The record gives the reactivity of an RNA of 177 nucleotides to 2A3 and DMS.
It was measured as part of the RMDB library OK1LIB.
The reactions ran in a buffer of 150 mM KOAc, 10 mM MgCl2 and 150 mM bicine (pH 8.5), at 24 C.
For DMS the reverse transcriptase was MarathonRT.

RNA sequence: GGGAACGACUCGAGUAGAGUCGAAAAGAAGUGGCAGGGACAUGCCCCAAAAGCUCGUUCUAGCAACAUAUGUUUGGCUAGUUCGAGCGAUUAGUCUCGAGGAGCGUCCUCUCGCCUUUUCACGAGAGAGCCUAAUCGAGUUCGCUCGAUUAGGCUCAAAAGAAACAACAACAACAAC
Reactivity to 2A3 in 0.01 (KOAc 150mM, MgCl2 10mM, bicine 150mM(pH8.5), 24C), signal-to-noise 2, nucleotides 027 to 126: g030a070a000g090u080g040g010c050a020g040g000g000a000c050a030u230g050c000c000c000c000a000a040a000a080g010c000u000c000g000u000u000c000u000a000g010c000a080a000c030a190u250a070u300g150u100u140u120g140g010c000u000a000g020u000u010c000g000a000g010c000g000a010u010u010a030g100u030c070u030c130g060a170g000g050a080g030c030g040u020c020c000u060c000u060c030g000c000c030u020u020u110u030c030a030c040g010a020g010a030
Reactivity to DMS in 0.01 (KOAc 150mM, MgCl2 10mM, bicine 150mM(pH8.5), 24C), signal-to-noise 1, nucleotides 027 to 126: g000a020a040g010u020g000g040c030a120g000g000g040a080c090a170u030g080c000c020c000c010a040a010a120a300g000c000u000c000g000u000u000c000u000a000g000c000a000a000c050a190u010a080u000g010u000u000u000g000g090c000u000a000g000u000u000c000g010a000g000c000g000a010u040u000a070g000u040c040u000c170g000a100g000g040a000g090c070g030u000c040c000u000c040u000c040g000c100c090u000u000u000u000c090a180c040g020a090g000a170